Structure probing data (2A3) for a 207-nucleotide construct. For 2A3, 865 sequencing reads were counted. The RNA was probed in 150 mM KOAc, 10 mM MgCl2 and 150 mM bicine (pH 8.5) at 24 C.
[RMDB]
RNA sequence: GGGAACGACUCGAGUAGAGUCGAAAAGCUGGCUCAUCAACGAGGACUAUGAGCUAUGGGAGGACCUCGAGAACGGCGACCCCGAGGCGCUUUCGCGACUCGUCGAGCGGUGGCCGUGGCUCCGCUCUUGGGUCGACGUGCUGGCUCCGCUGCUCGGGCUGAGGAAAUGGUUCGCCAUUUCCUCAGCAAAAGAAACAACAACAACAAC
Reactivity to 2A3 in 0.01 (KOAc 150mM, MgCl2 10mM, bicine 150mM(pH8.5), 24C), signal-to-noise 1, nucleotides 027 to 156: g000c020u040g050g000c010u030c080a120u040c050a090a240c050g050a040g000g040a030c030u110a090u200g040a060g040c020u070a180u110g110g050g020a020g050g070a030c010c040u050c020g040a070g000a040a000c000g010g000c000g010a010c000c000c000c030g000a000g080g000c010g000c050u230u280u300c200g000c000g010a000c000u000c000g080u090c080g000a000g000c050g000g020u160g100g040c000c070g040u090g070g030c010u000c010c000g000c000u000c010u020u090g000g000g040u000c000g000a000c000g000u000g020c010u030g000g030c000u020c000c000g050c010u050g030c000u060c040g000g060